[RMDB]
RNA sequence: GGGAACGACUCGAGUAGAGUCGAAAAGCAAGCCAACGUGUCUGGGUAUAAGGCUGUGCUGCUCGCGGCCUCGGAAUCGACCCGGUUCUUUCCGAUGCUGACGACGGCGGCCGGAACGGUGAAGCCGUCUGGCUGGUGCAUUCGUGCACCAGCCAGAAAAAGAAACAACAACAACAAC
Reactivity to 2A3 in 0.01 (KOAc 150mM, MgCl2 10mM, bicine 150mM(pH8.5), 24C), signal-to-noise 3, nucleotides 027 to 126: g050c060a060a010g020c010c020a080a050c090g130u100g030u060c070u090g110g050g050u110a230u050a260a050g000g010c000u030g090u110g050c020u010g010c020u000c000g000c000g000g000c000c000u020c030g000g000a010a020u040c080g010a030c050c090c050g140g000u140u010c000u010u010u010c000c010g000a000u030g000c020u020g030a230c020g000a000c010g000g020c000g020g010c000c000g030g010a020a000c030g070g020u070g030a090a010g040c000c010g030
Reactivity to DMS in 0.01 (KOAc 150mM, MgCl2 10mM, bicine 150mM(pH8.5), 24C), signal-to-noise 3, nucleotides 027 to 126: g000c040a110a100g000c030c010a120a110c120g000u000g010u000c020u000g010g030g000u010a070u020a200a180g030g000c020u000g000u040g020c000u030g000c150u010c010g000c040g000g010c010c020u020c020g000g000a000a030u010c200g000a040c010c130c180g020g020u030u020c060u020u000u010c000c000g000a070u000g020c020u000g010a120c030g000a000c000g000g010c050g010g040c040c000g000g000a040a090c080g000g030u010g000a170a110g000c000c010g000